[RMDB]
RNA sequence: GGGAACGACUCGAGUAGAGUCGAAAAUUUUCCCCAUUCUUGGUUACGCUGUAGUGCAAAAGAAUUCCUGGCUCUUUCUCUUGCACAGCUGACCUGCCAUUCUGCUGUUGCUAUGUAGAGUUAAGGAGUUUUAAAUGAGCUUCGGCUCAUUUAAAACAAAAGAAACAACAACAACAAC
Reactivity to 2A3 in 0.01 (KOAc 150mM, MgCl2 10mM, bicine 150mM(pH8.5), 24C), signal-to-noise 7, nucleotides 027 to 126: u070u030u020u030c010c000c000c010a080u070u040c020u060u070g100g010u100u080a070c080g030c080u110g100u280a110g030u070g070c030a020a040a030a050g030a030a060u060u030c010c010u030g040g000c000u010c010u000u150u010c050u020c000u020u020g000c000a000c000a020g000c010u020g020a020c010c030u030g030c020c010a090u170u080c010u040g000c000u010g040u210u060g020c020u050a010u120g030u040a020g020a010g030u020u020a130a040g040g010a030
Reactivity to DMS in 0.01 (KOAc 150mM, MgCl2 10mM, bicine 150mM(pH8.5), 24C), signal-to-noise 4, nucleotides 027 to 126: u000u050u030u000c010c010c000c230a110u010u000c040u010u010g000g010u010u010a050c110g010c080u000g010u020a100g030u000g000c040a070a050a080a090g000a070a070u010u000c010c010u000g010g000c010u000c010u000u010u000c070u000c070u000u000g020c010a020c020a000g010c010u010g000a040c080c020u000g000c060c050a170u010u010c060u010g010c010u000g020u000u010g010c030u000a050u030g010u000a010g010a020g010u000u010a040a060g000g010a120
Chemical mapping of a 177-nucleotide RNA with 2A3 and DMS. The reactions ran in a buffer of 150 mM KOAc, 10 mM MgCl2 and 150 mM bicine (pH 8.5), at 24 C. Source: RMDB libraries RFM100 and RFMREP, as collected in RNAgym. 2A3 is a SHAPE reagent: it acylates the 2'-hydroxyl of flexible nucleotides of all four kinds. Reactivities are rounded to 0.1 and cut off at 0 and 3.